[RMDB]
RNA sequence: GGGAACGACUCGAGUAGAGUCGAAAAUUUUUAAUGAUGAUACGAUGACGAGUAUGAAAAAGUAAAGAGGAUUUAUUACCGUUUUUAAGUACAUGUUUUAUGUACUUACUAAUUCGUAAUGAAUCGAGGAUACUUUGUUGUUCGCAACAAAGUAUCCAAAAGAAACAACAACAACAAC
Reactivity to DMS in 0.01 (KOAc 150mM, MgCl2 10mM, bicine 150mM(pH8.5), 24C), signal-to-noise 2, nucleotides 027 to 126: u000u050u020u000u030a080a100u000g000a070u020g010a080u000a010c030g020a100u000g020a090c100g010a140g040u010a040u020g000a050a040a090a060a070g000u010a080a030a100g010a120g020g000a020u000u000u010a000u010u000a010c000c140g000u000u000u000u000u000a000a010g000u000a010c000a000u000g010u030u060u010u030a000u000g000u000a010c000u010u000a000c030u000a010a000u000u010c200g000u000a000a000u000g000a000a000u000c010g000a150
Reactivity to 2A3 in 0.01 (KOAc 150mM, MgCl2 10mM, bicine 150mM(pH8.5), 24C), signal-to-noise 3, nucleotides 027 to 126: u130u110u000u040u090a160a120u100g050a020u010g020a000u000a050c030g010a010u080g100a020c010g010a030g060u080a030u130g070a060a050a080a010a020g180u200a030a060a060g130a050g200g000a000u000u000u000a000u000u010a000c000c030g010u000u000u000u000u000a000a000g010u000a000c000a000u030g200u070u080u090u150a010u010g000u050a010c000u000u000a000c000u000a000a020u030u100c000g000u000a000a000u000g040a000a000u000c030g000a060
Conditions: 150 mM KOAc, 10 mM MgCl2 and 150 mM bicine (pH 8.5), 24 C. Structure probing data (DMS and 2A3) for a 177-nucleotide construct. It was measured as part of the RMDB libraries RFM100 and RFMREP. For 2A3 the reverse transcriptase was SuperScript II with manganese. Reactivities are given for positions 27 through 126.